This 177-nucleotide RNA was probed chemically with DMS and 2A3.

RNA sequence: GGGAACGACUCGAGUAGAGUCGAAAAGCAAAAGAUUAACCAGGUGUAGCGGUGAAAUUCGUAGAGAUCUGGUGGAUAAUGAACCGGUGGCGAAGGCGAAAGAUAACCGCUGAAAAGAAGAAUUGAAGUACUACUUGUAGUUCGCUACAAGUAGUACAAAAGAAACAACAACAACAAC
Reactivity to DMS in 0.01 (KOAc 150mM, MgCl2 10mM, bicine 150mM(pH8.5), 24C), signal-to-noise 6, nucleotides 027 to 126: g010c110a060a060a080a100g000a100u000u010a100a130c030c020a070g010g010u000g010u010a050g010c010g000g020u000g010a070a120a070u000u000c020g020u010a130g020a110g000a100u000c010u000g000g020u000g010g000a130u000a100a100u010g010a130a030c020c010g010g010u000g010g010c300g010a100a130g010g000c020g010a030a040a030g010a060u000a140a050c020c010g010c010u010g000a060a040a060a070g000a080a070g000a060a120u000u000g000a130a110
Reactivity to 2A3 in 0.01 (KOAc 150mM, MgCl2 10mM, bicine 150mM(pH8.5), 24C), signal-to-noise 2, nucleotides 027 to 126: g080c010a100a060a000a010g070a110u150u130a050a060c010c010a060g090g050u110g110u180a010g000c000g060g000u010g020a050a040a040u040u030c000g000u030a020g030a010g000a170u000c020u030g000g020u130g020g050a090u140a280a110u180g050a020a020c000c000g000g050u000g050g010c070g040a030a030g100g000c000g000a020a030a000g150a020u020a000a000c000c000g000c070u020g030a020a060a000a030g110a040a010g040a050a050u160u120g030a150a010

Notes: The RNA was probed in 150 mM KOAc, 10 mM MgCl2 and 150 mM bicine (pH 8.5) at 24 C. The DMS profile rests on 6,940 reads.